[RMDB]
RNA sequence: GGGAACGACUCGAGUAGAGUCGAAAAGAUGGGUCCGAUGGAUUAAUGCGUCGCCGGCCAUUGGAUCCUGAUUGAUAGAUUGAGGGCGACGGUCGGAUCACUCGGUAAUUCGGUGCUCAACGAGUGAUCCGUGAUGAUAGUUAAGACGAGCACCUAACAGCAUGCAGGUAUUCGUACCUGCAUGCUGAAAAGAAACAACAACAACAAC
Reactivity to 2A3 in 0.01 (KOAc 150mM, MgCl2 10mM, bicine 150mM(pH8.5), 24C), signal-to-noise 2, nucleotides 027 to 156: g160a070u100g000g000g040u000c000c000g010a020u010g000g010a020u070u070a260a060u300g000c000g010u000c030g060c000c000g030g000c000c020a000u000u010g000g000a000u000c010c000u000g010a040u180u050g040a040u040a150g160a150u020u120g140a120g050g020g000c000g020a000c000g020g030u010c000g000g000a010u000c000a000c040u000c000g110g000u100a070a090u160u200c150g000g000u020g000c010u000c000a010a000c000g000a000g000u000g000a000u000c000c000g000u000g000a020u050g000a000u020a150g180u150u160a180a000g070a040c050g020a000g000c000a000c000c000u000a040a000